[RMDB]
RNA sequence: GGGAACGACUCGAGUAGAGUCGAAAAAGAAAGAGCGUAUUCGCGUCUUGACGUCAAUGAGCCUAGACUGUAGGCUCUAGUGGGAUAGUAACGCUCACUCCCAAAACGCUAUUCCACAGUCAGUUAAUAGCUGCUAAACAUUCGUGUUUAGCAGCUAAAAAGAAACAACAACAACAAC
Reactivity to DMS in 0.01 (KOAc 150mM, MgCl2 10mM, bicine 150mM(pH8.5), 24C), signal-to-noise 2, nucleotides 027 to 126: a080g000a080a170a080g000a000g020c000g010u000a250u000u020c100g010c050g020u000c090u000u000g000a040c000g040u000c270a100a120u000g000a010g000c010c000u010a050g030a170c220u000g010u000a000g010g010c000u000c000u000a010g010u000g000g000g000a000u000a020g000u000a050a020c060g020c000u000c010a070c150u000c000c010c000a040a070a090a120c150g000c010u010a000u000u000c010c000a000c010a110g010u000c050a020g000u000u010a070a120
Reactivity to 2A3 in 0.01 (KOAc 150mM, MgCl2 10mM, bicine 150mM(pH8.5), 24C), signal-to-noise 1, nucleotides 027 to 126: a000g110a000a030a020g010a010g010c010g010u020a030u120u220c070g010c030g160u090c120u090u140g000a030c000g060u070c060a070a070u100g010a000g000c000c000u010a010g000a300c110u180g150u230a000g000g040c000u000c020u010a010g000u010g000g000g000a000u010a010g030u040a030a000c000g030c010u000c000a020c060u050c030c000c000a010a010a010a010c050g000c000u000a000u000u010c000c000a020c010a000g050u060c020a010g020u080u090a080a040